Source information:
Structure probing data (DMS and 2A3) for a 177-nucleotide construct. For 2A3 the reverse transcriptase was SuperScript II with manganese. Values cover nucleotides 27 to 126. Source: RMDB library OK2TRN, as collected in RNAgym.
RNA sequence: GGGAACGACUCGAGUAGAGUCGAAAAAAGUGGUGUAAGCAUAACACAAAGUUGACGAAAAAUUCAUUUAGAAGCCGUGAGUUAGGUGAAAUUGAAUUUAAUACAUCUUUACUCCAAAGAAAUACCACGUAUAAAUCAGGUUCGCCUGAUUUAUACGAAAAGAAACAACAACAACAAC
Reactivity to DMS in 0.01 (KOAc 150mM, MgCl2 10mM, bicine 150mM(pH8.5), 24C), signal-to-noise 3, nucleotides 027 to 126: a090a060g000u000g000g020u000g010u000a040a070g010c130a060u000a050a040c090a080c070a090a090a120g010u000u000g010a090c130g020a050a100a040a060a020u000u000c020a020u000u000u020a120g000a160a300g000c030c010g010u000g020a110g000u000u010a040g020g010u000g000a050a020a030u010u010g000a040a030u000u000u000a030a070u000a150c080a020u000c010u000u000u000a080c020u000c020c090a040a070a090g010a070a060a080u000a060c060c040a090
Reactivity to 2A3 in 0.01 (KOAc 150mM, MgCl2 10mM, bicine 150mM(pH8.5), 24C), signal-to-noise 2, nucleotides 027 to 126: a000a000g150u090g050g000u050g000u010a060a040g050c050a050u090a170a070c070a000c040a100a130a020g030u080u070g070a100c110g050a090a020a020a090a050u030u000c000a060u080u150u150a120g000a200a000g000c020c030g030u080g080a200g060u080u120a010g000g010u090g030a050a020a050u020u030g020a010a030u030u040u080a080a050u100a020c010a010u010c000u020u090u040a050c030u020c030c000a100a080a010g090a070a100a030u070a050c010c010a020